[RMDB]
RNA sequence: GGGAACGACUCGAGUAGAGUCGAAAAAAUUACUAUUCUUAUAAUCUGCCUACUAUGUGUGACAUCAAACAAAUGUUGUUCUGCAUGGAAGUUGUAAACAAGUACUUCGAAAUCUAUGACGGUGGUUGAACUAUUGUGUUCGCACAAUAGAAAAGAAACAACAACAACAAC
Reactivity to 2A3 in 0.01 (KOAc 150mM, MgCl2 10mM, bicine 150mM(pH8.5), 24C), signal-to-noise 8, nucleotides 027 to 129: a020a040u230u140a050c070u070a050u130u040c040u060u130a070u030a150a110u070c020u050g060c030c010u030a100c010u010a060u050g050u000g020u010g040a010c000a020u040c050a060a090a210c070a050a110a020u130g010u010u010g000u070u060c020u030g000c020a010u040g010g020a040a020g000u040u050g060u070a040a070a040c070a060a060g050u030a040c030u020u020c020g040a050a040a060u030c050u040a080u130g050a050c030g000g010u030g010g030u000u030g010a050a020
Reactivity to DMS in 0.01 (KOAc 150mM, MgCl2 10mM, bicine 150mM(pH8.5), 24C), signal-to-noise 9, nucleotides 027 to 129: a080a070u050u010a030c080u030a080u050u010c040u020u000a100u020a060a050u030c030u020g040c010c010u000a130c050u040a020u000g030u000g020u040g030a040c040a040u040c000a040a070a090c270a060a050a100u000g000u000u030g020u020u010c030u030g030c040a050u000g050g010a050a060g000u000u000g010u000a040a050a070c140a070a070g010u010a070c030u000u000c030g010a060a100a070u010c040u000a040u040g020a180c280g030g000u020g010g020u000u000g000a040a110
Structure probing data (2A3 and DMS) for a 170-nucleotide construct. Values cover nucleotides 27 to 129. The DMS profile rests on 59,634 reads. The RNA was probed in 150 mM KOAc, 10 mM MgCl2 and 150 mM bicine (pH 8.5) at 24 C. For 2A3, 28,896 sequencing reads were counted.